This 177-nucleotide RNA was probed chemically with DMS and 2A3. 2A3 is a SHAPE reagent: it acylates the 2'-hydroxyl of flexible nucleotides of all four kinds. The 2A3 profile rests on 1,354 reads. 2A3 adducts were read by reverse transcription with SuperScript II with manganese.
RNA sequence: GGGAACGACUCGAGUAGAGUCGAAAACACACGCUGACAACAUCCUUGUAUACGUUGCUAGCUAUAACGAAGUUGACCAAUUGAGUAAGUUGCUUACUGACAAAGGUUAUUUAGUAACCAAGGUGGAUCAUACAUCGGGUUUCGACCCGAUGUAUGAAAAAGAAACAACAACAACAAC
Reactivity to DMS in 0.01 (KOAc 150mM, MgCl2 10mM, bicine 150mM(pH8.5), 24C), signal-to-noise 4, nucleotides 027 to 126: c050a110c170a110c190g010c050u000g020a030c040a050a050c050a100u010c030c050u000u020g020u000a150u010a090c110g010u000u000g030c020u010a010g010c080u000a100u020a090a100c120g010a080a120g000u000u010g040a060c060c020a070a140u000u000g000a070g000u000a030a020g020u020u000g000c050u000u000a030c010u000g000a150c120a030a040a170g020g010u000u010a020u000u010u000a100g000u000a040a060c070c010a050a050g000g010u010g010g010a170
Reactivity to 2A3 in 0.01 (KOAc 150mM, MgCl2 10mM, bicine 150mM(pH8.5), 24C), signal-to-noise 2, nucleotides 027 to 126: c060a000c000a020c020g060c070u110g080a010c040a050a030c000a090u140c020c000u060u050g090u080a200u040a110c060g010u020u020g010c000u010a010g000c020u040a010u070a260a060c090g060a120a010g070u130u140g030a020c030c060a070a090u060u070g020a020g010u050a020a030g060u170u130g170c030u080u060a040c010u020g100a050c030a070a090a040g060g010u000u000a010u040u090u020a040g010u000a010a010c030c020a010a010g010g010u010g030g030a040